Source information: This 177-nucleotide RNA was probed chemically with 2A3 and DMS. High 2A3 reactivity points to a flexible backbone, as in loops and unpaired stretches. High DMS reactivity at an A or C suggests that its Watson-Crick edge is free.

RNA sequence: GGGAACGACUCGAGUAGAGUCGAAAAGAAGAGAAAGGAGACACAGGGACAGUCUCCAGAGGUUCCUAAGGCCUCGAUCGCGCCUGCCGGGAAUCAUGGACACCCGGUUGUCCAUGAUAGAAGAAGACGUGAGGGAGGGAUUCGUCCCUCCCUCACGAAAAGAAACAACAACAACAAC
Reactivity to 2A3 in 0.01 (KOAc 150mM, MgCl2 10mM, bicine 150mM(pH8.5), 24C), signal-to-noise 1, nucleotides 027 to 126: g060a050a010g060a000g040a020a170a000g040g000a040g010a010c030a010c120a190g200g040g170a010c010a110g000u000c000u030c000c000a000g000a000g000g000u030u020c050c000u060a030a020g080g000c010c020u050c030g000a050u060c060g020c050g000c000c000u060g030c000c000g030g010g030a010a010u000c000a030u020g000g000a000c000a030c000c120c150g090g000u150u000g000u000c000c000a000u000g000a060u060a000g080a080a000g070a030a000g040a010
Reactivity to DMS in 0.01 (KOAc 150mM, MgCl2 10mM, bicine 150mM(pH8.5), 24C), signal-to-noise 1, nucleotides 027 to 126: g000a170a210g000a120g000a030a210a110g060g010a070g000a010c000a050c130a130g000g000g000a030c180a110g000u000c000u000c020c020a010g000a040g000g020u010u000c010c010u020a150a090g080g000c000c010u010c060g000a150u010c050g010c100g040c010c000u030g000c000c020g040g000g000a100a030u000c000a000u000g000g000a000c000a080c010c240c140g010g000u010u000g000u010c000c000a050u010g000a020u000a090g000a140a140g010a150a090g010a160